Structure probing data (DMS and 2A3) for a 177-nucleotide construct. Reactivities are given for positions 27 through 126. The 2A3 profile rests on 4,352 reads.
[RMDB]
RNA sequence: GGGAACGACUCGAGUAGAGUCGAAAACCGCCCAGCAGGCGACGUUGCGGGCGCUGGGCGCCAGGAGAGGUUCCCGGAGCCGACCUUCCGGCUGGCCGCUCUGUGACUGCUUCCCGGCUCUGCCCUCUAAUUUUCAGGAGUUCGCUCCUGAAAAUUAAAAAGAAACAACAACAACAAC
Reactivity to DMS in 0.01 (KOAc 150mM, MgCl2 10mM, bicine 150mM(pH8.5), 24C), signal-to-noise 3, nucleotides 027 to 126: c200c030g020c030c010c010a050g010c040a120g000g030c030g000a060c110g000u020u010g000c070g000g000g030c080g030c040u020g020g010g000c150g000c060c050a060g010g000a080g020a110g000g010u000u000c150c020c010g000g000a060g010c050c020g010a100c060c040u010u010c050c010g000g010c040u010g010g000c040c040g030c010u000c010u000g000u010g000a110c070u020g020c040u000u000c010c010c010g000g000c020u010c040u010g000c030c000c010u000c040
Reactivity to 2A3 in 0.01 (KOAc 150mM, MgCl2 10mM, bicine 150mM(pH8.5), 24C), signal-to-noise 2, nucleotides 027 to 126: c010c000g030c000c000c010a030g010c020a030g130g030c030g020a080c080g120u110u110g040c070g050g030g000c040g000c010u010g000g000g010c010g010c010c020a050g030g060a110g010a040g050g020u040u070c020c000c010g000g010a010g020c010c040g060a100c020c020u060u070c030c020g050g000c030u030g040g020c010c020g020c010u020c020u040g060u040g010a060c030u040g010c000u080u050c000c000c000g000g000c010u020c020u030g020c000c010c000u000c020
The data come from the RNA Mapping Database (RMDB), library RFM100.